[RMDB]
This 170-nucleotide RNA was probed chemically with DMS and 2A3. DMS adducts were read by reverse transcription with MarathonRT.
RNA sequence: GGGAACGACUCGAGUAGAGUCGAAAAAGAUUGCAAGCUGGUUCUAACACCGAGUUUGCCUCUAAUUCCUCGGUGUUGUCACUUGUUAACUUCACCGUUGAUCCUCAAAAAGCUUAUCUCGAUUUCGUCAACGAAGUGUUCGCACUUCGUAAAAGAAACAACAACAACAAC
Reactivity to DMS in 0.01 (KOAc 150mM, MgCl2 10mM, bicine 150mM(pH8.5), 24C), signal-to-noise 9, nucleotides 027 to 129: a030g020a060u040u020g030c000a030a040g010c120u040g030g000u010u020c130u080a060a040c130a030c040c010g020a010g020u040u040u040g010c070c140u000c040u000a090a160u000u000c000c000u010c040g030g040u000g030u010u010g030u040c040a090c100u000u020g000u030u010a060a040c040u020u020c050a130c010c000g000u000u040g000a050u000c020c000u000c020a040a060a060a090a080g000c100u040u030a080u050c020u020c070g030a090u000u020u010c020g000u050c110a120
Reactivity to 2A3 in 0.01 (KOAc 150mM, MgCl2 10mM, bicine 150mM(pH8.5), 24C), signal-to-noise 9, nucleotides 027 to 129: a000g070a060u080u110g000c000a000a010g010c070u030g030g030u140u050c080u240a060a020c030a000c110c000g020a010g010u010u050u050g050c010c000u030c000u030a110a140u090u060c020c000u000c000g000g000u010g010u010u000g020u030c020a040c100u040u080g030u080u070a050a030c010u030u030c030a040c050c000g000u010u030g020a030u010c000c000u020c000a040a050a020a020a030g050c050u110u100a120u190c020u010c020g130a150u040u130u040c050g040u050c040a020
2A3 adducts were read by reverse transcription with SuperScript II with manganese.
The reactions ran in a buffer of 150 mM KOAc, 10 mM MgCl2 and 150 mM bicine (pH 8.5), at 24 C.